[RMDB]
Chemical mapping of a 207-nucleotide RNA with 2A3. Values are in units of 0.01, from 0 to 300, in steps of 10. The data come from the RNA Mapping Database (RMDB), library OK3TST. The reactions ran in a buffer of 150 mM KOAc, 10 mM MgCl2 and 150 mM bicine (pH 8.5), at 24 C.
RNA sequence: GGGAACGACUCGAGUAGAGUCGAAAACUCUCGAGGAGACUCGAGAGAGCCUGCUUCGGCAGGCAAUGGUCGGCAUGGCAUCUCUUCCACCUCAAGGACCGACCCGGGCAUCCGAAGGAGGACGCACGUCCACUCGGAUGGCCGAGAGAGAGCCAAACACAUGAGCAAGCUUCGGCUUGCUCAUGUGAAAAGAAACAACAACAACAAC
Reactivity to 2A3 in 0.01 (KOAc 150mM, MgCl2 10mM, bicine 150mM(pH8.5), 24C), signal-to-noise 1, nucleotides 027 to 156: c010u000c000u010c000g000a010g030g030a050g020a030c000u000c010g000a000g010a010g000a000g010c000c000u040g000c000u020u050c210g180g000c000a000g000g040c020a000a080u020g010g000u000c000g000g000c070a090u060g030g010c040a300u000c010u010c010u030u010c020c060a130c010c040u100c100a140a110g060g010a020c000c000g000a000c020c010c000g040g000g010c000a000u000c010c000g060a130a080g050g060a230g020g020a030c060g090c140a130c190g030u000c000c000a000c000u000c000g000g000a000u000g000g010c000c000g000a000g010a000g000a000g010a020g000c000c000a010a040a010